Structure probing data (2A3) for a 207-nucleotide construct. Source: RMDB library RNAMAK, as collected in RNAgym. Values cover nucleotides 27 to 156. Conditions: 150 mM KOAc, 10 mM MgCl2 and 150 mM bicine (pH 8.5), 24 C. For 2A3 the reverse transcriptase was SuperScript II with manganese.
RNA sequence: GGGAACGACUCGAGUAGAGUCGAAAAGACUACUUCGGUAGUCAUAAAACCUUUGUGCUUGAUACAUAUUGUCAGCUCUACCGACCCAUUGGGUCGGGAUAGAGCUUGGAUUUAUAUGUAAUUAAGCACUCUGGUAAGCUAGUGGCUUCGGCCACAAGUUCACACACUUGUUCGCAAGUGUGUGAACAAAAGAAACAACAACAACAAC
Reactivity to 2A3 in 0.01 (KOAc 150mM, MgCl2 10mM, bicine 150mM(pH8.5), 24C), signal-to-noise 2, nucleotides 027 to 156: g000a000c000u000a000c010u030u020c160g070g020u010a000g000u000c000a000u090a000a170a000a030c010c000u020u000u000g000u000g010c000u000u020g000a000u040a010c020a000u010a000u010u040g000u000c000a000g000c020u000c000u000a010c000c010g000a000c000c020c130a300u200u300g000g000g010u000c000g000g000g000a020u080a000g000a000g000c040u000u090g000g000a020u090u300u000a010u020a010u000g010u150a300a300u000u020a000a000g010c000a000c000u010c010u000g000g000u030a040a000g130c130u160a030g010u000g010g010c000u020u080c200g140g040c000c000a000c000a000a000